[RMDB]
RNA sequence: GGGAACGACUCGAGUAGAGUCGAAAAACGGGCAGUGGCGAUGGCAACGCGGCAGCCGCAGGGUCGACUUCUUCGCAGCCGCAACAGACGGGGAACGGGCAAAGAGGGGUUCUCGUUCUGUUGGAAGCAGGCCUGAUUAUUUCGAUAAUCAGGCCUGAAAAGAAACAACAACAACAAC
Reactivity to DMS in 0.01 (KOAc 150mM, MgCl2 10mM, bicine 150mM(pH8.5), 24C), signal-to-noise 1, nucleotides 027 to 126: a010c130g000g000g030c040a010g000u000g010g000c060g020a020u000g000g050c070a060a050c070g000c060g000g000c080a110g000c010c060g000c030a010g020g000g010u020c080g020a100c060u020u020c020u000u020c110g020c090a090g010c000c040g000c010a000a030c030a000g000a050c030g010g000g020g030a010a020c100g030g020g020c230a050a090a060g020a240g000g000g000g000u000u000c000u000c000g000u020u000c060u000g000u000u000g000g000a070a120g000
Reactivity to 2A3 in 0.01 (KOAc 150mM, MgCl2 10mM, bicine 150mM(pH8.5), 24C), signal-to-noise 3, nucleotides 027 to 126: a000c070g010g050g000c030a070g040u060g100g020c040g050a090u080g120g000c040a040a050c070g020c010g070g000c010a020g040c040c040g000c020a030g050g000g000u040c020g050a050c020u050u020c000u050u020c060g000c060a000g040c010c030g010c010a010a020c010a010g050a000c020g020g000g010g020a000a060c020g040g010g010c080a070a100a010g090a090g020g060g040g030u020u000c010u000c010g050u080u020c010u020g020u000u020g030g010a020a000g010